This 177-nucleotide RNA was probed chemically with 2A3 and DMS. The RNA was probed in 150 mM KOAc, 10 mM MgCl2 and 150 mM bicine (pH 8.5) at 24 C. The data come from the RNA Mapping Database (RMDB), library OK1LIB. The 2A3 profile rests on 2,443 reads.
RNA sequence: GGGAACGACUCGAGUAGAGUCGAAAAGUGACCGUACAUAGUCAGCAACGGCGCUGGAGGCCGCGCGUCCAAUUCCAACGAGCGUUGCCAGAUGGGCCAAUUGAGCGAAGGCCGUCAGGAACGGCCACACUGGCUGCAUGUUCGCAUGCAGCCAGUGAAAAGAAACAACAACAACAAC
Reactivity to 2A3 in 0.01 (KOAc 150mM, MgCl2 10mM, bicine 150mM(pH8.5), 24C), signal-to-noise 3, nucleotides 027 to 126: g090u050g040a140c000c000g050u090a040c050a120u230a040g090u140c060a000g010c040a050a040c010g060g020c060g000c050u040g050g000a020g020g030c040c010g060c040g000c020g110u080c050c010a050a040u150u040c020c030a020a050c030g000a010g050c020g000u010u020g040c000c030a010g080a140u040g010g080g000c010c020a030a120u050u140g060a060g060c070g040a060a020g000g000c010c000g000u000c020a050g000g150a110a000c000g000g000c000c000a040
Reactivity to DMS in 0.01 (KOAc 150mM, MgCl2 10mM, bicine 150mM(pH8.5), 24C), signal-to-noise 2, nucleotides 027 to 126: g010u000g000a140c000c040g020u060a110c100a110u030a050g000u030c040a220g000c030a060a000c010g000g000c010g000c040u000g010g000a170g030g000c040c040g050c050g030c070g020u000c040c080a110a210u070u010c030c010a050a130c080g000a050g020c010g010u000u000g010c000c000a070g000a120u000g010g000g000c030c030a040a160u030u010g000a200g000c070g000a140a090g040g000c000c000g000u010c050a110g010g030a050a020c020g000g000c040c010a040